[RMDB]
RNA sequence: GGGAACGACUCGAGUAGAGUCGAAAAGCUCAAGGAGACAAUCAGGUUGUGUGUACUAUAUACAAGUUAAAUCACUCUCCUACCGAAUUUGAUCUAAUGAGGAAUUUAAAGAACAUUCAUACGAAUAACGUAGGUCUCUAUUCGUAGAGACCUACGUAAAAGAAACAACAACAACAAC
Reactivity to 2A3 in 0.01 (KOAc 150mM, MgCl2 10mM, bicine 150mM(pH8.5), 24C), signal-to-noise 2, nucleotides 027 to 126: g150c050u070c040a040a020g230g030a090g030a110c010a000a000u080c070a020g060g050u130u060g000u090g000u000g030u000a050c110u080a040u020a000u000a120c060a010a000g040u000u050a080a040a110u090c010a000c070u080c060u130c070c020u040a010c020c000g010a000a060u000u000u000g030a000u000c000u050a020a050u070g040a040g120g000a050a180u200u160u240a060a190a100g090a050a000c000a110u000u000c030a000u270a300c100g010a150a010u060a260
Reactivity to DMS in 0.01 (KOAc 150mM, MgCl2 10mM, bicine 150mM(pH8.5), 24C), signal-to-noise 2, nucleotides 027 to 126: g050c020u000c000a140a160g030g000a040g020a000c090a080a150u010c110a200g000g000u000u000g000u100g000u000g000u000a100c120u010a070u090a060u030a000c080a050a200g000u000u030a010a020a100u060c040a020c170u000c070u060c080c020u030a130c040c130g010a040a000u010u000u060g000a070u000c070u000a000a020u020g000a140g000g060a030a090u040u070u030a060a030a070g000a020a080c190a000u000u000c090a040u000a150c110g000a020a120u020a030
The record gives the reactivity of an RNA of 177 nucleotides to 2A3 and DMS. The 2A3 profile rests on 551 reads. Source: RMDB library OK1LIB, as collected in RNAgym. Conditions: 150 mM KOAc, 10 mM MgCl2 and 150 mM bicine (pH 8.5), 24 C. For DMS the reverse transcriptase was MarathonRT.